RNA sequence: GGGAACGACUCGAGUAGAGUCGAAAAGAACCACCCGUAACAUAUUCACCAGCUACAAUUUUAGCUGGUAGUGUCUACACUAAUAGCUGCCUUGUAUCGUCUGAUGGACAACCUGGCGGUGAUGCUACUAAAAACGGAACUUCGGUUCCGUUUUUAGAAAAGAAACAACAACAACAAC
Reactivity to DMS in 0.01 (KOAc 150mM, MgCl2 10mM, bicine 150mM(pH8.5), 24C), signal-to-noise 2, nucleotides 027 to 126: g010a230a130c120c040a100c060c040c020g050u010a030a070c050a040u000a120u010u000c240a100c000c010a020g000c000u010a000c300a140a180u010u020u070u000a000g010c010u000g010g010u000a020g000u000g000u000c100u000a000c090a090c180u000a070a100u010a180g000c010u000g010c030c030u010u000g000u000a100u010c140g000u010c010u010g010a120u040g010g030a040c020a050a010c010c020u000g000g010c000g010g000u010g000a130u000g010c030u010a090
Reactivity to 2A3 in 0.01 (KOAc 150mM, MgCl2 10mM, bicine 150mM(pH8.5), 24C), signal-to-noise 1, nucleotides 027 to 126: g050a040a020c030c030a010c020c070c000g000u020a000a010c000a020u120a130u150u110c070a010c000c000a010g010c000u090a110c040a290a300u090u130u220u080a010g000c000u010g020g000u000a010g010u000g000u000c080u020a020c040a030c070u190a150a070u040a160g040c010u030g020c000c000u040u060g070u090a200u210c080g030u040c030u070g220a150u280g150g000a000c000a000a010c010c000u040g030g020c000g020g000u000g010a010u180g020c010u050a080